[RMDB]
RNA sequence: GGGAACGACUCGAGUAGAGUCGAAAACUGAUAUGCUUCGGCAUAUCAGAAAAUAAGGUGCAAAAAGAUCAGGAAACUGAAAACUGCAGCACUAGCACAAAAAAACAGACGUCUUCGGACGUCUGAACUUGUAGCAAUACUUCGGUAUUGCUACAAGAAAAGAAACAACAACAACAAC
Reactivity to DMS in 0.01 (KOAc 150mM, MgCl2 10mM, bicine 150mM(pH8.5), 24C), signal-to-noise 2, nucleotides 027 to 126: c010u000g020a000u000a000u010g010c010u000u010c190g050g010c020a000u000a010u040c000a000g010a030a060a080a080u010a160a140g000g000u010g030c000a050a080a040a110a040g000a070u000c000a010g000g000a170a120a240c020u010g000a000a040a060a020c010u010g010c300a090g020c020a000c020u000a070g010c170a100c170a000a000a040a100a050a140a110c020a030g030a040c000g000u000c000u000u010c250g040g000a000c000g010u000c000u000g000a000a050
Reactivity to 2A3 in 0.01 (KOAc 150mM, MgCl2 10mM, bicine 150mM(pH8.5), 24C), signal-to-noise 2, nucleotides 027 to 126: c010u010g000a010u000a000u000g000c000u010u110c170g100g030c000a000u000a010u010c000a010g040a010a080a000a000u150a050a060g040g010u010g030c070a020a000a020a190a000g020a020u040c000a020g000g030a070a090a050c010u000g010a040a040a110a170c030u070g040c060a040g000c000a010c030u020a070g010c090a030c050a130a180a050a000a020a080a010c010a000g000a000c000g010u000c010u040u060c210g080g010a000c000g000u000c000u000g000a000a020